Conditions: 150 mM KOAc, 10 mM MgCl2 and 150 mM bicine (pH 8.5), 24 C. An RNA of 177 nucleotides, treated with 2A3 and read out base by base. Reactivities are given for positions 27 through 126. 2A3 is a SHAPE reagent: it acylates the 2'-hydroxyl of flexible nucleotides of all four kinds.

RNA sequence: GGGAACGACUCGAGUAGAGUCGAAAAUUAUAGCGAAAUAGACUUUUUUAUCGCGUGUUCAAUAUUUGCGUUAGUUAUUAUUUUUUUGGAAUGUAAAUUCUCUCUAAACACAGGUGAUAUUUAUGUUCACCAAGGUCUAAUUCGUUAGACCUUGGUGAAAAGAAACAACAACAACAAC
Reactivity to 2A3 in 0.01 (KOAc 150mM, MgCl2 10mM, bicine 150mM(pH8.5), 24C), signal-to-noise 1, nucleotides 027 to 126: u220u140a110u100a080g000c000g020a030a040a040u060a070g020a060c000u000u050u030u060u130u150a080u100c020g000c030g030u040g080u070u140c040a120a110u090a090u130u040u200g000c010g030u030u000a010g010u000u000a130u130u000a110u000u030u050u010u000u090u050g090g050a020a010u050g030u230a030a030a050u100u010c000u000c010u000c020u060a050a110a000c050a010c000a030g060g040u010g020a010u000a160u080u140u000a040u140g030u000u000